RNA sequence: GGGAACGACUCGAGUAGAGUCGAAAAGAUGAUGGAGCGAGUAUCGAUGAAGUAAGCAACGAUCUGAACGAAAUGAAAAAGAAUUCAGGUGAUGCAGCGGAAGCACUGGACGGUAUCGGAAAAGGAAUUGUUGCAGGAAACAUGAUGCAAGCUGCUGUCCCGGAAUAUAGUUCGCUAUAUUCCGGGAAAAAGAAACAACAACAACAAC
Reactivity to 2A3 in 0.01 (KOAc 150mM, MgCl2 10mM, bicine 150mM(pH8.5), 24C), signal-to-noise 3, nucleotides 027 to 156: g070a040u180g010a010u090g040g000a020g010c020g020a010g010u040a030u080c030g020a030u110g020a020a040g090u100a060a000g010c020a000a060c050g030a030u050c020u050g020a070a020c060g060a070a050a070u240g060a110a060a000a020a030g070a020a010u060u010c000a000g040g010u020g020a060u070g030c050a030g010c000g020g060a050a010g030c080a030c080u040g000g020a000c030g000g000u030a080u120c060g040g000a040a060a020a020g070g020a050a050u050u040g040u020u010g000c020a010g060g060a060a020a000c010a010u040g000a010u040g020c010a000a060g010c030u110g000c010u020g070
Reactivity to DMS in 0.01 (KOAc 150mM, MgCl2 10mM, bicine 150mM(pH8.5), 24C), signal-to-noise 3, nucleotides 027 to 156: g000a070u000g040a120u010g020g020a090g020c010g010a270g040u000a030u000c020g000a120u000g000a060a140g030u020a080a150g040c030a020a080c000g010a070u000c020u010g000a020a130c020g030a090a060a110u020g010a050a030a120a150a120g010a130a100u000u010c070a040g010g030u010g000a110u010g020c000a070g000c030g000g030a110a120g030c030a080c050u000g030g030a090c060g010g000u000a110u000c060g000g020a030a030a100a120g010g010a090a150u000u000g010u000u000g010c010a070g040g000a070a090a090c030a050u010g010a130u000g030c030a060a170g020c050u010g030c020u000g010